[RMDB]
RNA sequence: GGGAACGACUCGAGUAGAGUCGAAAAUCAGUAACUAUGUUCAUUUUUUUAGGAGUAGGACGUCUAGCCAGUAUGGAAGAGGAUUUUCUAGAUACUCUCUUCAACAUCUUUGAUCUCAAUGGAAUGCAAAACCCCAUGGUGUAACAACCAACGAUAAUCCUAAGUCACAAUUCGUUGUGACUUAGGAAAAAGAAACAACAACAACAAC
Reactivity to DMS in 0.01 (KOAc 150mM, MgCl2 10mM, bicine 150mM(pH8.5), 24C), signal-to-noise 2, nucleotides 027 to 156: u000c060a150g020u000a070a110c070u000a100u000g000u010u000c030a050u000u000u000u000u000u000u000a120g030g010a090g000u000a060g040g010a120c000g010u000c080u000a100g050c030c040a080g020u000a070u000g050g040a080a090g010a030g030g000a040u000u000u010u010c080u000a100g010a130u000a060c030u000c030u020c030u000u000c010a070a080c060a070u010c040u000u000u000g020a040u000c030u000c020a080a070u000g010g000a070a050u000g000c040a050a050a070a110c020c000c000c090a120u000g020g010u000g000u000a080a060c150a120a060c040c030a040a120c070g000a100u000a060a210
Reactivity to 2A3 in 0.01 (KOAc 150mM, MgCl2 10mM, bicine 150mM(pH8.5), 24C), signal-to-noise 2, nucleotides 027 to 156: u070c020a020g030u040a030a040c040u040a070u150g040u020u030c060a090u060u050u030u000u040u100u200a060g000g020a030g020u040a020g040g060a020c020g000u010c010u010a000g020c020c010a030g050u100a070u110g070g010a000a010g010a010g020g000a000u010u070u070u090c020u040a010g020a010u050a050c020u020c000u000c000u120u020c020a020a030c000a040u020c040u090u030u030g070a030u020c020u010c060a010a050u030g040g030a080a040u040g040c050a010a010a090a150c000c010c030c050a030u060g000g020u010g000u010a010a030c030a000a000c000c020a000a050c040g030a030u000a090a040